RNA sequence: GGGAACGACUCGAGUAGAGUCGAAAAGAAAGAAAGAAAGAAUGGCCGAUGAUGACGAGACCACUGCGCAAUCUGAGUUCUGGGAACCAGGUGAUGGAGUAUGUUCUGAGAACAGACUGAGGCCGAAUCCUGAGCUGGAAUUCGUUCCAGCUCAGGAAAAAGAAACAACAACAACAAC
Reactivity to DMS in 0.01 (KOAc 150mM, MgCl2 10mM, bicine 150mM(pH8.5), 24C), signal-to-noise 2, nucleotides 027 to 126: g000a140a060a100g060a020a090a080g010a100a100a020g000a170a080u060g020g000c000c000g000a250u030g010a200u000g020a110c080g010a040g000a020c080c100a030c000u000g040c010g000c300a040a030u030c020u010g040a160g000u000u010c000u070g000g010g030a020a000c030c000a020g000g000u000g000a150u050g000g000a020g000u050a040u010g000u010u020c000u000g000a070g010a070a050c020a050g000a100c060u000g000a270g000g000c000c020g000a090a110
Reactivity to 2A3 in 0.01 (KOAc 150mM, MgCl2 10mM, bicine 150mM(pH8.5), 24C), signal-to-noise 2, nucleotides 027 to 126: g100a000a090a000g140a020a040a000g080a070a170a050g130a030a100u150g010g000c010c040g010a070u010g010a030u130g000a000c050g050a000g000a010c000c000a030c080u150g020c150g010c000a000a030u000c020u010g070a060g150u060u000c040u110g180g040g000a000a000c010c000a020g020g070u020g010a090u150g060g000a010g030u100a230u100g090u110u000c000u060g120a030g000a190a070c010a050g110a090c040u020g010a080g010g000c030c020g000a000a000
Chemical mapping of a 177-nucleotide RNA with DMS and 2A3. For 2A3, 847 sequencing reads were counted. The RNA was probed in 150 mM KOAc, 10 mM MgCl2 and 150 mM bicine (pH 8.5) at 24 C. It was measured as part of the RMDB library RFM100.